Description:
The data come from the RNA Mapping Database (RMDB), library OK3TST. This 207-nucleotide RNA was probed chemically with 2A3 and DMS. The reactions ran in a buffer of 150 mM KOAc, 10 mM MgCl2 and 150 mM bicine (pH 8.5), at 24 C. For DMS the reverse transcriptase was MarathonRT.

RNA sequence: GGGAACGACUCGAGUAGAGUCGAAAAUAAGUGGCCUGCCAACUAACAUGGAUUGGAGGAAGGGAGUGGUGGUCAAGAAACAAAGAAGAUGACAGAAUAAAGUCCUCCUGGAAGACCUGAUAGUGGUUCUGUUUAAUUUUACAUUUUAACACGGAUACUCAGCAUAUGGAUUCGUCCAUAUGCUGAGAAAAGAAACAACAACAACAAC
Reactivity to 2A3 in 0.01 (KOAc 150mM, MgCl2 10mM, bicine 150mM(pH8.5), 24C), signal-to-noise 1, nucleotides 027 to 156: u120a030a060g020u020g000g080c010c040u060g010c040c030a040a040c020u060a080a080c020a120u070g010g040a090u040u010g010g000a040g000g000a010a070g040g010g010a060g030u050g030g020u020g000g010u000c060a000a020g070a040a040a010c030a070a020a000g040a060a020g060a070u100g020a000c020a010g080a030a020u090a130a030a000g010u000c000c020u020c000c000u010g030g010a030a000g020a050c010c010u060g080a080u070a060g040u060g010g000u010u090c000u040g020u030u070u000a000a070u060u070u030u090a010c030a080u070u100u020u170a100a050c060a020c060g090g000a020u060a110
Reactivity to DMS in 0.01 (KOAc 150mM, MgCl2 10mM, bicine 150mM(pH8.5), 24C), signal-to-noise 1, nucleotides 027 to 156: u020a100a210g030u020g030g020c070c010u000g080c020c060a070a170c070u000a060a090c040a060u000g030g000a220u000u010g000g010a120g040g010a060a080g000g010g000a120g020u010g050g020u000g000g050u010c050a040a130g040a170a080a170c040a110a060a150g010a050a180g000a080u010g000a120c040a080g010a120a090u010a140a100a140g000u000c030c000u010c020c040u030g020g010a070a050g000a070c020c020u010g020a080u000a130g040u010g030g030u010u000c010u000g000u010u000u000a050a050u010u010u010u000a040c110a090u000u000u000u010a010a120c050a050c130g010g010a150u000a150